[RMDB]
RNA sequence: GGGAACGACUCGAGUAGAGUCGAAAAGUCCAAGGACGGCAGCAGGCGCGGAACUUGCCCAAUCCCGGCGGGGGAGGCAGCCACAAGACGUGGGGGCCCGGAACGCACGGCAAAGGAGUGCGGGGCGACUGGAGGGCAAGUCUGGUGCCAGCAGCCGCAUCCAGACUAUGUUCGCAUAGUCUGGAUGAAAAGAAACAACAACAACAAC
Reactivity to 2A3 in 0.01 (KOAc 150mM, MgCl2 10mM, bicine 150mM(pH8.5), 24C), signal-to-noise 4, nucleotides 027 to 156: g050u000c020c020a010a030g090g010a020c010g000g010c010a030g000c020a050g020g000c020g010c030g030g030a050a110c000u000u010g010c000c000c020a020a150u080c030c010c000g050g060c100g030g030g000g020g010a090g050g020c020a050g080c020c000a010c010a050a100g180a070c160g010u020g000g000g010g030g010c000c000c000g040g080a100a010c020g000c000a000c000g040g050c100a120a090a070g160g040a140g040u020g000c000g000g000g030g030c010g030a160c010u030g000g030a050g010g010g010c000a000a000g000u000c010u070g090g010u030g010c000c000a000g000c000a000g000c000c000g000
Reactivity to DMS in 0.01 (KOAc 150mM, MgCl2 10mM, bicine 150mM(pH8.5), 24C), signal-to-noise 1, nucleotides 027 to 156: g030u000c000c030a170a240g000g030a150c040g020g040c040a050g080c030a180g010g020c020g050c060g020g010a040a030c010u000u000g020c010c000c000a160a150u000c050c010c010g010g030c000g010g000g000g060g020a110g000g010c020a120g080c010c020a050c030a160a120g020a160c120g030u000g020g000g030g020g020c010c000c020g070g060a100a190c020g020c000a020c020g010g000c050a060a210a110g000g010a160g000u000g030c000g000g020g000g010c040g010a080c080u010g010g010a190g020g010g100c010a060a080g000u020c030u000g040g080u000g020c020c020a000g000c010a160g000c000c000g030
Chemical mapping of a 207-nucleotide RNA with 2A3 and DMS. Values cover nucleotides 27 to 156. The RNA was probed in 150 mM KOAc, 10 mM MgCl2 and 150 mM bicine (pH 8.5) at 24 C.